[RMDB]
RNA sequence: GGGAACGACUCGAGUAGAGUCGAAAAGGACAAUGAAAUUGUUAAGUCUUCAGAUGUUGUAGACAGCAAUGAAAAUUUAACAUGGCCACUUGUUUUAGAAUGCACUAGGGCAUCCACUUCUGCCGUUAACGCUAGGUGUUCGCACCUAGCAAAAGAAACAACAACAACAAC
Reactivity to DMS in 0.01 (KOAc 150mM, MgCl2 10mM, bicine 150mM(pH8.5), 24C), signal-to-noise 6, nucleotides 027 to 129: g010g000a000c070a010a050u040g000a070a070a140u070u020g020u030u020a010a010g000u000c000u020u020c030a100g000a100u040g040u040u020g000u020a050g030a170c040a050g030c030a040a040u030g000a000a010a000a000u000u010u000a030a000c000a000u030g010g010c090c000a010c210u070u020g030u030u050u000u030a000g000a040a060u050g020c050a010c050u010a150g010g000g090c030a040u000c050c000a090c040u020u010c080u060g000c070c060g040u030u020a050a130c160
Reactivity to 2A3 in 0.01 (KOAc 150mM, MgCl2 10mM, bicine 150mM(pH8.5), 24C), signal-to-noise 8, nucleotides 027 to 129: g080g010a030c040a030a040u130g050a140a080a030u040u010g020u030u080a060a030g010u000c010u030u010c010a060g060a300u110g070u160u040g020u030a070g020a170c010a000g030c030a020a000u040g070a050a030a010a000u050u050u010a000a010c000a040u020g050g000c000c010a050c100u050u040g080u080u150u020u070a050g040a070a030u100g030c010a010c010u020a030g000g010g000c000a030u010c000c000a040c010u070u050c030u100g090c030c020g070u100u140a080a020c040